[RMDB]
RNA sequence: GGGAACGACUCGAGUAGAGUCGAAAAUGUGAUGUGUUCGCACAUCACAAACUACCGAGAAUCUUCCUCGGUAUAAAAGAGGAACCCUUGCAAACAAGGGAAUAAGCCCCUGCUUCGGCAGGGGCAACAUCAGAUACCGUUUCGACGGUAUCUGAUGAAAAGAAACAACAACAACAAC
Reactivity to DMS in 0.01 (KOAc 150mM, MgCl2 10mM, bicine 150mM(pH8.5), 24C), signal-to-noise 3, nucleotides 027 to 126: u010g000u000g010a000u010g010u000g000u000u020c260g030c000a010c000a000u000c000a000c000a020a050a140c090u000a160c000c000g010a040g000a170a140u010c130u010u000c030c000u010c000g000g000u000a020u000a030a040a090a120g010a100g010g000a050a140c010c000c000u000u000g010c300a080a170a190c010a010a010g000g000g000a090a040u000a070a180g000c010c000c000c000u000g020c000u000u000c190g020g010c010a000g010g010g000g000c000a000a010
Source: RMDB library M2PK50, as collected in RNAgym. Structure probing data (DMS) for a 177-nucleotide construct. For DMS the reverse transcriptase was MarathonRT.